[RMDB]
RNA sequence: GGGAACGACUCGAGUAGAGUCGAAAAGAGCAGACGCCUUUCUGUUAAUAACAGGUUCGAUUUCACGAAUUUCGUUUUUCUCAUCAUGCAAUAAAUAUGCCACAUCAGCAUUAGUCACUGCACUAGCGUUUAUAGAGAGCUUCGGCUCUCUAUAAACAAAAGAAACAACAACAACAAC
Reactivity to DMS in 0.01 (KOAc 150mM, MgCl2 10mM, bicine 150mM(pH8.5), 24C), signal-to-noise 3, nucleotides 027 to 126: g000a120g010c030a010g010a070c210g010c070c070u000u000u010c010u000g010u000u000a070a090u000a100a050c030a030g010g010u000u010c010g010a210u000u000u000c160a120c030g010a050a060u000u000u010c140g000u000u000u000u000u000c020u000c020a060u000c080a100u010g000c050a060a050u010a040a120a100u000a040u000g010c000c050a050c110a060u010c110a050g000c030a020u010u000a060g010u010c130a060c080u000g010c050a050c070u010a070g020c210
Reactivity to 2A3 in 0.01 (KOAc 150mM, MgCl2 10mM, bicine 150mM(pH8.5), 24C), signal-to-noise 3, nucleotides 027 to 126: g050a010g000c020a020g040a130c040g070c030c020u000u150u030c010u000g050u050u060a120a030u120a090a060c020a040g030g000u010u030c020g020a120u020u180u200c160a110c080g020a040a030u030u100u090c090g020u010u000u000u060u040c030u000c030a100u020c020a020u060g020c010a040a050u110a130a150a030u170a100u100g000c030c030a070c010a120u070c020a040g000c000a020u030u060a030g050u070c020a020c110u060g030c020a020c070u030a040g080c010
An RNA of 177 nucleotides, treated with DMS and 2A3 and read out base by base. Reactivities are rounded to 0.1 and cut off at 0 and 3. The 2A3 profile rests on 2,221 reads. The DMS profile rests on 2,439 reads. Source: RMDB library OK2TST, as collected in RNAgym.